[RMDB]
RNA sequence: GGGAACGACUCGAGUAGAGUCGAAAAUGCGGCAGCGCCGGGAGCUGCCCGUCUGGACCACCAAGUACAGCUUCAUGGAGCACCUGGAAGGCAACAGCGGCAUCGUCCUGGUGUCCGGGCCCCCCGGCCAAAAUAGCGGGUUCGCCCGCUAUUUUGGAAAAGAAACAACAACAACAAC
Reactivity to DMS in 0.01 (KOAc 150mM, MgCl2 10mM, bicine 150mM(pH8.5), 24C), signal-to-noise 2, nucleotides 027 to 126: u000g010c090g020g000c070a050g020c040g030c040c020g000g010g010a160g020c060u000g000c030c000c030g010u000c020u010g010g010a090c170c070a070c010c010a010a040g000u010a050c070a110g020c030u010u000c070a210u000g000g000a250g010c030a070c060c050u020g000g000a150a130g000g000c050a030a220c020a030g020c300g000g000c010a030u000c100g000u010c040c010u000g010g020u000g010u000c010c000g010g000g010c000c010c010c000c000c010g010g010
Reactivity to 2A3 in 0.01 (KOAc 150mM, MgCl2 10mM, bicine 150mM(pH8.5), 24C), signal-to-noise 2, nucleotides 027 to 126: u030g010c060g010g000c020a010g000c050g040c010c000g010g030g000a040g010c020u000g000c000c010c000g000u000c020u010g040g010a050c050c000a020c020c000a140a010g020u040a060c000a040g020c020u030u050c040a260u130g050g040a030g020c030a070c020c080u140g110g120a190a080g070g020c010a050a020c010a060g030c030g030g020c000a070u090c060g070u000c010c010u010g020g000u010g000u000c020c050g000g060g000c020c010c000c000c000c000g020g020